[RMDB]
RNA sequence: GGGAACGACUCGAGUAGAGUCGAAAAUCGGCCUGCCAGGCACUGGCUGUUCGCUGUCGGUGCGGUUACGUAGGCUCGGCGAAGAAGAACACGACCAGCCGCCGAACCCAGGCGGACGCAGGAGGAAUGAGUGCAUUACGUUCGCGUAAUGCACUCAAAAAGAAACAACAACAACAAC
Reactivity to 2A3 in 0.01 (KOAc 150mM, MgCl2 10mM, bicine 150mM(pH8.5), 24C), signal-to-noise 2, nucleotides 027 to 126: u050c010g010g000c010c000u030g050c010c010a080g070g070c030a050c020u000g030g010c060u090g020u070u070c090g020c170u100g040u050c020g070g000u000g050c010g060g060u090u050a040c170g020u110a090g030g000c060u080c060g000g000c110g050a040a010g050a080a010g060a150a080c010a000c160g100a110c040c000a000g010c000c000g000c020c010g030a060a040c000c000c000a000g030g000c000g030g050a000c040g000c000a000g020g060a000g030g070a190a080
Reactivity to DMS in 0.01 (KOAc 150mM, MgCl2 10mM, bicine 150mM(pH8.5), 24C), signal-to-noise 1, nucleotides 027 to 126: u000c070g000g000c000c000u010g010c020c070a300g010g000c000a030c010u010g000g040c040u040g050u000u020c060g040c060u000g010u020c280g070g020u020g020c040g000g000u000u060a110c130g000u000a010g000g010c020u000c060g010g000c000g000a100a080g000a020a100g020a050a100c140a080c020g000a110c000c050a250g010c030c010g000c000c000g000a080a080c000c030c010a170g010g010c030g000g000a100c100g000c020a040g000g000a130g000g010a070a130